[RMDB]
RNA sequence: GGGAACGACUCGAGUAGAGUCGAAAAGGGGUCUCUCUGCGAAGCGAUACCGUUUCUUGGAUUUAUACUGAAGCCUCCACGGUAUUGUCAGAAACCGUAUCGCGAAGUAUAGAGAGACGGAGGCACCCAAACGGAAGCUACUUCGGUAGCUUCCGAACAAAUCUAUGAUCUUCGGAUCAUAGAUUUGAAAAGAAACAACAACAACAAC
Reactivity to 2A3 in 0.01 (KOAc 150mM, MgCl2 10mM, bicine 150mM(pH8.5), 24C), signal-to-noise 3, nucleotides 027 to 156: g050g020g030g000u020c000u000c010u020c000u000g030c040g140a170a010g000c000g000a000u010a010c000c020g010u010u010u000c050u100u160g140g010a040u220u300u060a010u090a010c010u020g050a100a050g050c020c000u020c030c010a010c010g000g000u010a010u010u020g000u020c010a030g000a000a000a000c020c010g000u010a000u020c000g000c000g010a030a000g010u020a020u220a070g000a010g010a000g000a000c020g000g010a000g020g000c020a050c010c000c000a050a070a010c020g000g000a000a010g000c000u010a010c010u090u160c270g140g000u000a000g010c010u000u000c000c000g000a010a000
Reactivity to DMS in 0.01 (KOAc 150mM, MgCl2 10mM, bicine 150mM(pH8.5), 24C), signal-to-noise 1, nucleotides 027 to 156: g000g010g040g040u000c000u010c000u000c010u000g040c030g010a180a300g000c010g030a030u000a020c030c070g030u070u000u000c010u000u010g060g020a070u000u000u010a030u010a060c020u020g010a020a150g040c030c020u010c030c010a300c000g000g000u000a000u010u020g000u010c030a040g000a050a040a050c030c070g000u030a020u000c020g040c010g000a020a220g000u000a080u020a020g000a050g000a030g000a000c020g020g020a040g050g040c060a130c020c000c020a090a160a210c010g040g020a030a010g000c010u010a010c000u000u020c300g010g000u000a000g000c010u000u020c000c010g010a030a090